[RMDB]
RNA sequence: GGGAACGACUCGAGUAGAGUCGAAAAUGACUACAGCCACUACUACAAGACCUUCGAGGACCUGCGGGACAAGAUUCUUGGUGCCGUCAAUGAGAACUCCAGGAUUGUCCUGCAGAUCAACAAUGCCGUGUAUUAUUGCUUUCGAGCAAUAAUACACAAAAGAAACAACAACAACAAC
Reactivity to DMS in 0.01 (KOAc 150mM, MgCl2 10mM, bicine 150mM(pH8.5), 24C), signal-to-noise 4, nucleotides 027 to 126: u010g020a070c030u010a050c120a110g000c010c010a090c060u020a060c080u000a080c110a070a080g000a060c030c010u010u010c080g010a130g020g010a040c050c000u000g010c010g030g010g000a020c020a020a030g020a130u010u010c000u000u010g000g000u010g010c110c090g020u020c090a100a080u010g020a150g000a100a200c040u000c010c000a010g010g000a040u010u000g010u000c000c000u010g000c020a000g000a020u010c020a070a100c160a040a060u020g020c080c150
Reactivity to 2A3 in 0.01 (KOAc 150mM, MgCl2 10mM, bicine 150mM(pH8.5), 24C), signal-to-noise 9, nucleotides 027 to 126: u120g030a010c030u060a030c060a030g050c010c010a050c020u070a020c010u030a020c020a070a070g030a100c010c010u040u110c070g060a070g030g060a020c010c010u000g000c010g010g000g010a000c000a010a050g070a270u100u020c020u010u020g010g010u040g040c080c050g130u140c050a090a210u300g060a090g020a170a050c020u000c020c000a000g000g010a020u010u010g000u000c000c000u000g000c000a000g000a000u000c000a020a100c030a080a100u130g090c040c050
Annotation
Structure probing data (DMS and 2A3) for a 177-nucleotide construct. Values cover nucleotides 27 to 126. Conditions: 150 mM KOAc, 10 mM MgCl2 and 150 mM bicine (pH 8.5), 24 C. Values are in units of 0.01, from 0 to 300, in steps of 10. For DMS the reverse transcriptase was MarathonRT. Source: RMDB libraries RFM100 and RFMREP, as collected in RNAgym.